[RMDB]
Chemical mapping of a 177-nucleotide RNA with DMS and 2A3. The data come from the RNA Mapping Database (RMDB), library TTRDES.

RNA sequence: GGGAACGACUCGAGUAGAGUCGAAAAGAUAUGGACCGCUAUGCAAGGCGGUACUCGGAAACGAGUACCCGCUGAUGACCAUAACGGUCCUAAGUCAAAGCUUACACUUCUUCGGAAGUGUAAGCAACUCAAAUCAUACCUUCGGGUAUGAUUUGAGAAAAGAAACAACAACAACAAC
Reactivity to DMS in 0.01 (KOAc 150mM, MgCl2 10mM, bicine 150mM(pH8.5), 24C), signal-to-noise 3, nucleotides 027 to 126: g000a010u000a030u000g000g000a010c000c020g020c040u000a000u000g010c060a080a050g020g030c010g000g010u000a000c000u000c000g010g000a010a010a050c000g000a040g020u000a000c300c130c090g020c000u010g000a070u020g010a060c300c010a010u010a000a010c010g010g000u000c000c010u000a000a050g000u000c000a070a130a180g010c010u000u000a020c010a000c000u000u000c000u010u000c220g000g000a010a010g000u000g000u000a000a000g010c000a010a030
Reactivity to 2A3 in 0.01 (KOAc 150mM, MgCl2 10mM, bicine 150mM(pH8.5), 24C), signal-to-noise 2, nucleotides 027 to 126: g010a000u010a010u030g000g000a000c010c010g000c000u000a020u020g000c090a120a210g000g030c020g000g010u000a000c000u000c000g000g000a040a000a000c020g030a010g020u030a030c200c230c090g000c010u020g000a150u050g010a010c010c000a010u010a020a010c010g010g000u040c000c000u010a010a000g000u000c040a200a090a000g020c000u000u000a000c000a010c000u000u030c010u020u070c300g210g000a000a000g010u000g000u000a010a000g000c010a000a000
Conditions: 150 mM KOAc, 10 mM MgCl2 and 150 mM bicine (pH 8.5), 24 C.